[RMDB]
RNA sequence: GGGAACGACUCGAGUAGAGUCGAAAAGCGAUCAAUAAUAAGUCGACCACUCGAAAGAGUCACAUGGAAACAUGCCUACUAAUGCGUCCAAUGUAGCUCGACGAUUAGGACGCAGAAGAUCGCGAAAAAUAAAUCCGUCGUUCGCGACGGAUUUAUUAAAAGAAACAACAACAACAAC
Reactivity to 2A3 in 0.01 (KOAc 150mM, MgCl2 10mM, bicine 150mM(pH8.5), 24C), signal-to-noise 3, nucleotides 027 to 126: g020c000g060a000u080c060a050a040u140a180a010u120a190a000g050u040c000g010a040c010c090a010c010u020c020g030a050a040a030g020a010g010u000c000a000c000a020u010g010g000a000a150a000c000a000u080g010c010c010u060a080c090u110a110a030u100g010c000g020u010c010c010a000a030u030g060u170a110g070c090u030c150g130a110c010g000a020u020u000a040g000g010a000c000g000c000a000g000a010a030g020a030u030c030g000c000g150a130a110a030
Reactivity to DMS in 0.01 (KOAc 150mM, MgCl2 10mM, bicine 150mM(pH8.5), 24C), signal-to-noise 3, nucleotides 027 to 126: g000c010g010a010u000c000a080a130u050a080a130u020a090a150g030u010c010g010a100c140c170a120c100u000c000g000a060a070a070g000a020g000u020c070a280c020a030u000g010g000a110a050a100c010a010u000g000c170c040u000a110c140u070a120a090u000g000c170g060u010c000c000a100a020u000g010u000a080g010c060u000c020g010a160c020g000a040u010u010a090g040g000a010c000g000c010a110g000a070a120g000a010u010c010g000c000g020a010a080a070